[RMDB]
RNA sequence: GGGAACGACUCGAGUAGAGUCGAAAAGCCAGUUGGGUGCAGGCUAUAGCUGCCAUCGGCUGACCUAGAGAAGACACAUCAGCUGAUCCUUUGGACCCUAGGACUUGAGACAGAAGUUCUGGGCUUCUCCUCCUGCGGCCUAGCUCUGAGACAAUGAGUCAUUACUGACUUUCGAGUCAGUAAUGACAAAAGAAACAACAACAACAAC
Reactivity to 2A3 in 0.01 (KOAc 150mM, MgCl2 10mM, bicine 150mM(pH8.5), 24C), signal-to-noise 2, nucleotides 027 to 156: g100c010c000a010g000u050u050g010g010g010u020g020c030a020g000g040c070u100a070u190a160g070c040u030g040c040c040a000u000c030g010g010c000u000g030a050c000c080u140a070g080a010g030a260a020g090a030c070a010c010a250u040c010a020g000c000u000g030a100u290c030c010u110u040u060g010g010a000c000c000c040u000a000g010g000a010c000u000u030g020a030g070a230c080a060g150a050a010g080u010u000c020u020g000g000g000c000u150u010c010u040c020c010u000c000c010u050g000c040g030g010c010c010u000a000g020c010u000c060u080g160a160g040a030c090a020a170u190g030a010
Reactivity to DMS in 0.01 (KOAc 150mM, MgCl2 10mM, bicine 150mM(pH8.5), 24C), signal-to-noise 2, nucleotides 027 to 156: g020c020c030a060g000u000u000g020g000g040u010g000c010a060g070g030c120u000a010u010a140g040c070u010g050c060c130a170u000c050g010g000c040u000g010a050c070c060u000a170g000a190g030a160a140g000a170c070a120c060a090u000c010a070g010c060u010g000a030u000c090c060u010u030u010g040g000a080c100c000c010u010a060g010g010a060c000u000u000g000a230g030a240c270a150g020a050a100g000u000u000c020u020g010g010g030c020u000u000c040u000c010c010u000c120c100u000g000c010g060g020c000c000u020a090g010c040u010c010u000g020a170g000a140c070a090a070u010g000a300

This 207-nucleotide RNA was probed chemically with 2A3 and DMS. For DMS the reverse transcriptase was MarathonRT. Source: RMDB library OK3TST, as collected in RNAgym. For 2A3, 852 sequencing reads were counted.